[RMDB]
RNA sequence: GGGAACGACUCGAGUAGAGUCGAAAACGGUAAGGAAGUCAUGCGUAGGAUUCUGUUGGGUAACUAUGUGUUAUCAGCUGAACGCCAAAGUGUCUAUUAUAAGAAAGGCUCGGCGAUUCGAGCAAAACACAUCACGCUUAUUCGUAAGCGUGAUGUGAAAAGAAACAACAACAACAAC
Reactivity to DMS in 0.01 (KOAc 150mM, MgCl2 10mM, bicine 150mM(pH8.5), 24C), signal-to-noise 3, nucleotides 027 to 126: c090g000g020u010a060a090g000g000a080a060g010u000c050a050u000g010c100g020u000a120g000g010a110u000u000c050u000g000u000u000g000g010g000u000a030a040c040u000a090u010g030u000g000u000u000a050u010c060a110g020c000u000g000a020a040c060g010c020c010a030a070a160g020u000g010u000c020u000a090u020u010a110u020a100a100g000a070a130a110g010g010c010u000c240g000g000c130g000a200u000u000c010g000a010g050c040a040a040a090a110
Reactivity to 2A3 in 0.01 (KOAc 150mM, MgCl2 10mM, bicine 150mM(pH8.5), 24C), signal-to-noise 2, nucleotides 027 to 126: c020g040g030u070a030a040g040g060a070a040g030u020c020a020u100g010c040g020u050a010g000g040a070u050u000c000u010g050u030u100g120g040g000u030a020a010c030u030a100u300g150u010g010u070u030a080u060c020a000g000c010u000g000a040a000c060g010c010c010a080a040a070g010u030g000u000c010u000a130u210u090a230u190a170a090g060a110a080a000g090g020c010u000c020g000g030c080g080a130u080u100c010g040a010g000c000a030a000a000a040